An RNA of 207 nucleotides, treated with DMS and 2A3 and read out base by base. For 2A3, 6,466 sequencing reads were counted. The reactions ran in a buffer of 150 mM KOAc, 10 mM MgCl2 and 150 mM bicine (pH 8.5), at 24 C. For DMS the reverse transcriptase was MarathonRT.

RNA sequence: GGGAACGACUCGAGUAGAGUCGAAAAGGUGAUCUUUCGAGAUCACCAAAAAAUCCUAAGUCGACCGCUCGUAGACAUGGUCCCCCUGUCGGAAACGACAGGCGACCAACAGCUACGAUGUCGAUAUGGAAAAAACACGGGUAUUCGUACCCGUGAAACAUAUUCACUAGUUCGCUAGUGAAUAUGUAAAAGAAACAACAACAACAAC
Reactivity to DMS in 0.01 (KOAc 150mM, MgCl2 10mM, bicine 150mM(pH8.5), 24C), signal-to-noise 3, nucleotides 027 to 156: g020g020u010g020a000u010c010u000u010u000c230g020a070g010a010u010c010a010c000c010a000a000a020a060a000a120u000c000c000u000a100a290g020u000c020g000a040c000c040g030c090u000c020g000u000a020g050a050c070a300u000g010g000u010c050c030c060c010c000u010g010u020c000g010g000a200a110a200c000g010a060c000a010g020g010c300g000a050c000c000a040a090c090a160g020c020u000a010c000g030a020u010g000u000c010g000a030u010a190u000g010g010a010a010a100a110a050a170c000a010c020g010g030g000u000a050u010u010c240g030u000a020c000c010c000g010u000g000a050a100
Reactivity to 2A3 in 0.01 (KOAc 150mM, MgCl2 10mM, bicine 150mM(pH8.5), 24C), signal-to-noise 2, nucleotides 027 to 156: g000g000u010g000a000u000c020u050u140u160c250g040a010g000a030u000c000a000c000c000a000a000a010a000a020a010u040c040c000u060a120a010g020u000c000g000a010c000c010g000c030u000c000g020u020a030g050a200c050a080u030g000g030u020c020c020c000c010c000u000g000u000c010g000g040a060a040a030c000g000a000c000a000g000g000c000g010a000c010c000a020a080c060a060g010c000u010a000c000g010a010u180g000u000c000g000a000u000a030u010g000g050a050a110a000a040a020a000c020a010c020g040g000g000u030a040u060u100c210g040u070a050c000c000c000g000u000g000a000a010
2A3 adducts were read by reverse transcription with SuperScript II with manganese.